[RMDB]
This 177-nucleotide RNA was probed chemically with 2A3 and DMS. The RNA was probed in 150 mM KOAc, 10 mM MgCl2 and 150 mM bicine (pH 8.5) at 24 C. For DMS the reverse transcriptase was MarathonRT. For 2A3 the reverse transcriptase was SuperScript II with manganese.
RNA sequence: GGGAACGACUCGAGUAGAGUCGAAAAUGAACGACUGCCAUUGGAGUCACUAGAUCAUCCUAAUGGAGAUGCUUUUGUUUGGCCUAGUGUAAGAUUAGUUUUUCCAACUCUCAUUGAUACUAUAGGGAAAGACCAAUUAGUUCGCUAAUUGGUCUUUAAAAGAAACAACAACAACAAC
Reactivity to 2A3 in 0.01 (KOAc 150mM, MgCl2 10mM, bicine 150mM(pH8.5), 24C), signal-to-noise 3, nucleotides 027 to 126: u120g010a050a030c020g090a060c050u080g050c030c000a030u020u030g030g000a060g030u020c010a020c130u060a040g020a090u050c010a050u020c040c020u100a130a090u090g070g000a110g040a060u100g020c010u090u040u050u090g120u070u060u110g030g020c000c010u010a030g020u010g000u060a060a030g010a110u070u080a030g050u050u000u030u090u010c020c020a060a080c020u010c000u010c050a090u050u070g050a070u100a200c050u040a080u160a180g020g000g060
Reactivity to DMS in 0.01 (KOAc 150mM, MgCl2 10mM, bicine 150mM(pH8.5), 24C), signal-to-noise 7, nucleotides 027 to 126: u010g000a090a080c110g010a100c070u000g020c030c030a060u000u000g010g010a090g010u000c020a080c130u000a060g010a050u000c060a100u000c010c020u010a060a060u000g010g010a100g010a080u000g010c070u000u000u000u000g000u000u000u010g010g020c040c010u000a040g020u000g010u000a070a110g010a090u000u000a060g010u000u010u000u000u000c050c040a050a130c090u000c050u000c070a100u000u000g000a110u010a060c090u000a110u000a080g010g000g010

For DMS, 11,138 sequencing reads were counted.